[RMDB]
RNA sequence: GGGAACGACUCGAGUAGAGUCGAAAAGCAAGCCGACAGUCCGUCGCUCAUCAUCUUCGAGCAGAUCUGGCAGUACGAGCAGACCAACCGCACCGGCCUCGAUGUCGGCAUGACCGUGACGCUGCCGGAGACCGUUCUUUUUCGAAAGAACGGUCUCAAAAGAAACAACAACAACAAC
Reactivity to 2A3 in 0.01 (KOAc 150mM, MgCl2 10mM, bicine 150mM(pH8.5), 24C), signal-to-noise 2, nucleotides 027 to 126: g050c040a040a040g050c000c000g050a030c020a000g070u040c000c070g020u030c050g010c000u000c000a090u040c020a080u000c100u280u140c130g010a020g060c040a080g010a180u060c090u060g060g000c030a020g000u040a040c060g010a080g000c010a010g100a050c000c010a030a010c070c030g110c010a070c050c040g060g000c050c010u020c000g070a070u080g010u070c020g040g010c020a010u090g120a070c000c090g060u010g030a000c040g040c020u060g060c000c020g060
Reactivity to DMS in 0.01 (KOAc 150mM, MgCl2 10mM, bicine 150mM(pH8.5), 24C), signal-to-noise 2, nucleotides 027 to 126: g010c080a120a100g000c010c010g000a080c040a100g020u010c040c100g020u000c010g030c010u010c060a140u000c150a150u010c210u000u000c150g020a060g000c090a060g020a040u000c100u010g000g000c000a060g010u000a030c060g020a080g000c060a040g010a080c080c040a070a040c120c040g000c090a070c090c060g010g000c030c020u010c070g000a050u000g000u010c060g000g010c090a040u000g000a090c020c020g010u030g010a100c060g010c030u010g010c010c030g010